[RMDB]
RNA sequence: GGGAACGACUCGAGUAGAGUCGAAAAACCGGUGCCGCCACGGUGAACCUGAUUAACGGCAGCGGUAAGCCGGUGAGCGUGGCCAUCACUGCACACCCCGCGCCGGACCGGAUACAGGUCAGCACCCUGCCGGAUGGCGUGGAGACAUACGGUGUGAUGGUCACCAUUUAUUCGUAAAUGGUGACCAAAAAGAAACAACAACAACAAC
Reactivity to 2A3 in 0.01 (KOAc 150mM, MgCl2 10mM, bicine 150mM(pH8.5), 24C), signal-to-noise 2, nucleotides 027 to 156: a000c010c000g010g000u070g040c050c020g000c010c000a020c040g050g000u100g000a050a080c030c040u040g070a180u110u290a120a100c070g200g010c010a000g010c050g030g020u080a000a000g020c020c040g010g040u100g030a100g030c070g000u080g020g000c020c030a050u080c020a030c080u060g000c080a010c020a010c010c000c000c000g010c000g000c000c010g040g070a160c010c000g040g000a080u060a230c000a000g000g000u040c070a040g050c020a040c030c000c000u060g010c000c000g020g000a000u040g000g000c000g010u000g010g030a070g020a020c080a040u220a020c050g010g020u010g000u000g020a070
Reactivity to DMS in 0.01 (KOAc 150mM, MgCl2 10mM, bicine 150mM(pH8.5), 24C), signal-to-noise 1, nucleotides 027 to 156: a010c000c000g000g030u010g010c120c020g080c000c040a020c030g000g000u000g000a100a060c070c040u000g000a160u010u010a130a100c060g070g040c150a110g080c100g010g010u010a040a180g000c000c080g010g000u000g020a080g010c050g020u000g000g050c010c000a110u030c010a070c020u000g040c010a100c180a180c000c020c010c000g030c010g050c010c000g090g000a150c040c030g000g070a100u000a130c080a020g000g030u000c030a280g000c070a150c300c010c010u000g010c000c020g000g000a200u000g000g000c000g000u040g010g020a040g000a050c040a100u000a040c030g010g000u020g030u020g000a180